[RMDB]
RNA sequence: GGGAACGACUCGAGUAGAGUCGAAAAAGUUUAUAUCCUAAUGUGAAAUUUCGAGAAUGUGUUGAUAUGCAAGUAACGAUUAAGUCACCGAUACCACCUAAACCUAGAAAUGUCAUAGGAUCGGCACAACAGCGAAAUGAUUCGUCAUUUCGCUGUUAAAAGAAACAACAACAACAAC
Reactivity to DMS in 0.01 (KOAc 150mM, MgCl2 10mM, bicine 150mM(pH8.5), 24C), signal-to-noise 3, nucleotides 027 to 126: a090g010u000u010u010a130u020a110u010c010c000u000a060a100u010g020u010g010a020a080a070u010u000u000c020g000a080g030a100a080u010g000u000g020u000u010g000a010u000a030u000g020c120a090a060g000u000a060a020c030g000a170u000u000a050a160g010u000c020a040c010c050g010a050u010a020c040c030a010c050c010u000a020a070a100c180c030u000a080g010a030a020a020u010g000u000c000a070u000a040g000g000a030u000c190g000g000c120a080c160
Reactivity to 2A3 in 0.01 (KOAc 150mM, MgCl2 10mM, bicine 150mM(pH8.5), 24C), signal-to-noise 2, nucleotides 027 to 126: a000g070u110u110u010a280u010a050u050c000c000u080a170a060u110g060u000g140a090a020a120u030u010u010c050g000a040g040a110a050u110g040u010g010u080u140g060a060u080a050u170g080c020a060a000g060u010a020a010c030g000a030u060u080a060a100g010u020c010a010c020c040g030a030u040a060c010c060a000c000c020u020a060a040a030c000c030u040a060g030a030a060a010u080g030u050c020a060u030a030g030g000a030u040c040g120g000c070a010c020
This 177-nucleotide RNA was probed chemically with DMS and 2A3. DMS adducts were read by reverse transcription with MarathonRT. It was measured as part of the RMDB library OK2TST. For DMS, 2,190 sequencing reads were counted.